[RMDB]
RNA sequence: GGGAACGACUCGAGUAGAGUCGAAAAGAUAUGGAGGCGGCGGAGCAACAGCCUCCGUGUCGGAAACGACACGAGGACAUGCUCCCGAGCCUCCUAAGUCAAACGAUUGGAGUUCGCUCCAAUCGAACAACUAAAAGAUGUUCGCAUCUUUUAGUUGAAAAGAAACAACAACAACAAC
Reactivity to DMS in 0.01 (KOAc 150mM, MgCl2 10mM, bicine 150mM(pH8.5), 24C), signal-to-noise 3, nucleotides 027 to 126: g010a030u000a150u000g010g010a020g010g030c010g020g030c300g020g000a020g030c000a120a080c230a180g000c000c000u000c080c150g030u000g010u010c010g010g000a040a040a070c000g010a000c000a000c000g010a010g000g000a020c050a280u010g010c010u000c000c000c010g000a250g010c000c000u000c000c000u000a000a040g000u000c010a120a130a260c020g000a010u000u000g000g000a020g010u000u020c300g010c000u000c000c000a000a000u000c000g010a070a160
Reactivity to 2A3 in 0.01 (KOAc 150mM, MgCl2 10mM, bicine 150mM(pH8.5), 24C), signal-to-noise 4, nucleotides 027 to 126: g000a010u030a010u070g000g000a000g010g000c080g040g170c300g040g020a010g020c130a140a120c070a270g020c000c020u010c030c040g010u000g000u000c000g000g000a010a010a000c000g000a000c000a000c010g000a000g000g020a020c120a260u300g000c000u000c000c000c000g020a020g000c000c000u000c000c000u000a000a000g000u000c010a000a060a120c030g000a010u000u010g000g010a020g030u100u110c240g120c140u000c000c000a000a000u010c000g000a020a030